[RMDB]
The record gives the reactivity of an RNA of 207 nucleotides to 2A3 and DMS. For DMS, 7,261 sequencing reads were counted. For 2A3 the reverse transcriptase was SuperScript II with manganese. The 2A3 profile rests on 2,535 reads.
RNA sequence: GGGAACGACUCGAGUAGAGUCGAAAAUUGGAGAGAUUGUGGCUGUUGUGCAUAGUCACCCUAAUGCCGCAUCUACCCCUUCCCAUGCGGACCGCGUUCAGUGCGAGCUGUCUGAACUUCCGUGGCACAUUAUCAGCGUAGGGAUGGUUGAUGGUAACACAGUUUUGUUAUUCGUAACAAAACUGUGAAAAGAAACAACAACAACAAC
Reactivity to 2A3 in 0.01 (KOAc 150mM, MgCl2 10mM, bicine 150mM(pH8.5), 24C), signal-to-noise 4, nucleotides 027 to 156: u140u100g030g000a060g010a020g010a040u150u060g020u020g010g000c040u040g030u270u020g020u080g000c090a170u160a150g060u220c010a060c020c000c010u140a190a090u180g010c000c000g000c010a010u010c010u130a300c000c020c000c000u000u000c020c000c000a020u060g000c050g040g010a050c040c080g060c040g110u050u040c020a010g040u070g210c070g060a050g030c040u060g090u070c020u030g020a030a020c000u070u020c040c020g020u050g040g010c020a020c000a070u050u190a070u170c010a040g000c030g080u070a080g000g020g020a030u050g030g000u030u060g020a090u020g020g070u090a050a000
Reactivity to DMS in 0.01 (KOAc 150mM, MgCl2 10mM, bicine 150mM(pH8.5), 24C), signal-to-noise 2, nucleotides 027 to 156: u020u000g040g010a060g010a090g010a050u010u000g040u010g020g030c000u000g020u000u010g030u000g000c030a180u000a150g000u000c010a040c000c110c030u000a100a090u010g010c020c020g020c020a040u010c050u020a170c010c000c020c020u010u030c010c010c020a160u010g020c050g000g010a060c130c040g020c090g030u000u000c030a090g050u000g030c030g010a100g050c000u000g000u010c050u000g000a060a080c010u000u000c030c040g010u000g020g010c050a080c040a110u000u020a050u020c020a110g020c030g040u000a110g020g010g010a110u000g010g020u000u000g010a100u000g000g030u000a110a250